[RMDB]
RNA sequence: GGGAACGACUCGAGUAGAGUCGAAAAUCGAUCGUUCGAGAUCACACACGAGUACGAACGUUCGAGUGAGAGUGAACGUUCUCGUGUGAGAGAGAUCACUCGUGUUCUCUCACUCACGUGAGUUCGAGUGUUCGUACGAGUUCACGUGUGAGUGAACUCGCGGGACACAGUUCGCUGUGUCCCGCGAAAAAGAAACAACAACAACAAC
Reactivity to DMS in 0.01 (KOAc 150mM, MgCl2 10mM, bicine 150mM(pH8.5), 24C), signal-to-noise 2, nucleotides 027 to 156: u010c030g010a040u000c050g010u000u040c070g010a140g020a090u000c050a300c020a040c000a090c030g020a140g020u020a100c060g000a030a120c000g020u000u000c040g020a200g020u010g000a170g000a130g000u020g010a040a150c060g010u000u000c030u010c010g000u000g040u000g020a030g010a060g020a060g010a060u010c020a050c040u010c090g030u000g020u000u010c040u000c000u010c010a100c040u000c050a040c040g020u000g010a100g020u000u010c020g010a130g000u000g020u000u000c080g010u000a100c030g020a050g010u000u000c050a020c030g020u010g040u000g020a100g000u010g010a030a030c040
Reactivity to 2A3 in 0.01 (KOAc 150mM, MgCl2 10mM, bicine 150mM(pH8.5), 24C), signal-to-noise 6, nucleotides 027 to 156: u140c040g010a010u020c040g040u120u080c060g040a050g010a210u020c010a010c000a000c000a000c050g040a020g080u120a050c080g020a030a010c000g010u000u010c020g010a040g060u200g070a100g000a010g050u090g030a050a010c040g030u070u010c010u000c000g010u000g010u020g010a000g000a000g000a000g000a030u040c020a010c030u050c070g080u090g010u080u010c030u010c000u000c020a030c010u040c000a030c030g020u030g030a030g000u020u010c020g000a020g060u090g070u110u100c060g010u070a020c010g000a000g020u050u030c060a030c070g030u100g030u030g030a040g010u040g010a020a020c000
Conditions: 150 mM KOAc, 10 mM MgCl2 and 150 mM bicine (pH 8.5), 24 C.
The record gives the reactivity of an RNA of 207 nucleotides to DMS and 2A3.
For 2A3, 5,337 sequencing reads were counted.
It was measured as part of the RMDB library OK3TST.